[RMDB]
Annotation:
The data come from the RNA Mapping Database (RMDB), libraries RFM100 and RFMREP. The record gives the reactivity of an RNA of 177 nucleotides to 2A3 and DMS. The reactions ran in a buffer of 150 mM KOAc, 10 mM MgCl2 and 150 mM bicine (pH 8.5), at 24 C. DMS adducts were read by reverse transcription with MarathonRT.

RNA sequence: GGGAACGACUCGAGUAGAGUCGAAAAAGAGUCUAAUUUUCUUCAUUAUUCAAUUUGGAUCCUGUUAAGUGAGACAGGCAUUCACUGACAAGAAGGAACAUUUAAAUUUUGCCAAAUAAGUUCAUUAAAAGCAGAAGAUAUUCGUAUCUUCUGCUUUAAAAGAAACAACAACAACAAC
Reactivity to 2A3 in 0.01 (KOAc 150mM, MgCl2 10mM, bicine 150mM(pH8.5), 24C), signal-to-noise 4, nucleotides 027 to 126: a010g050a010g040u030c020u050a080a120u040u060u020u000c010u020u000c010a130u010u200a090u150u100c020a040a130u120u070u150g000g000a010u000c000c000u000g000u040u040a140a180g120u160g230a060g010a080c010a000g000g000c010a000u000u000c010a020c030u020g030a010c010a150a090g040a000a000g050g010a020a010c030a070u090u150u160a090a170a110u100u100u090u090g070c000c000a000a070a090u140a150a010g060u080u110c010a000u120u140a020
Reactivity to DMS in 0.01 (KOAc 150mM, MgCl2 10mM, bicine 150mM(pH8.5), 24C), signal-to-noise 6, nucleotides 027 to 126: a050g000a050g010u020c070u010a010a020u010u000u000u000c010u000u000c010a090u030u010a130u030u000c020a030a090u000u010u010g000g000a020u000c020c000u000g010u000u010a060a110g040u060g010a140g000a030c020a020g000g010c160a010u000u020c000a060c300u000g010a070c300a070a110g010a020a020g020g000a000a020c300a020u000u000u010a050a050a060u000u000u010u000g000c040c030a080a060a110u020a060a080g020u000u010c060a080u010u000a060